Source: RMDB library OK3TST, as collected in RNAgym. Chemical mapping of a 207-nucleotide RNA with 2A3 and DMS. High 2A3 reactivity points to a flexible backbone, as in loops and unpaired stretches.
[RMDB]
RNA sequence: GGGAACGACUCGAGUAGAGUCGAAAAAAGUGGCGCUGUCCGUUCCCCGACCAAUGGGUACGUGACUUCUACACCGUAUGCGGAAAAGAGAUGCUUCAGCCGUUCGCGCCCGCGUACUCGGCGGAGCUGAGGUUGCUGACGUUUUACGACCGCGCACACUAAUCAAAGGUUUCGACCUUUGAUUAGUAAAAGAAACAACAACAACAAC
Reactivity to 2A3 in 0.01 (KOAc 150mM, MgCl2 10mM, bicine 150mM(pH8.5), 24C), signal-to-noise 3, nucleotides 027 to 156: a000a000g100u090g010g000c030g000c020u020g000u010c020c000g020u040u060c020c000c010c010g090a120c000c030a130a140u200g030g000g010u050a030c020g050u130g060a030c000u080u040c060u050a030c020a030c050c010g090u100a080u170g060c050g000g080a080a090a060a010g090a020g000a030u080g030c020u020u020c020a040g010c010c000g040u050u040c030g000c020g050c040c050c010g010c010g000u050a090c080u040c080g050g010c000g000g010a020g000c030u060g030a050g030g040u060u050g010c030u020g040a070c020g050u050u060u110u180a060c060g020a030c010c020g000c000g000c000a020c000
Reactivity to DMS in 0.01 (KOAc 150mM, MgCl2 10mM, bicine 150mM(pH8.5), 24C), signal-to-noise 3, nucleotides 027 to 156: a070a060g030u010g000g010c000g010c020u000g010u000c040c010g010u000u000c020c020c020c080g000a170c090c060a130a130u030g010g020g030u000a030c030g000u010g020a050c040u010u000c030u000a100c010a090c110c070g030u000a300u000g000c020g000g010a110a110a070a150g010a150g000a110u000g010c060u000u010c040a060g010c020c020g030u000u000c050g020c020g000c000c040c000g000c040g020u010a060c090u000c020g020g030c030g030g000a110g040c000u000g010a030g010g000u010u000g000c010u020g020a110c140g010u000u000u000u000a100c020g020a110c020c010g000c030g010c020a170c160

The RNA was probed in 150 mM KOAc, 10 mM MgCl2 and 150 mM bicine (pH 8.5) at 24 C.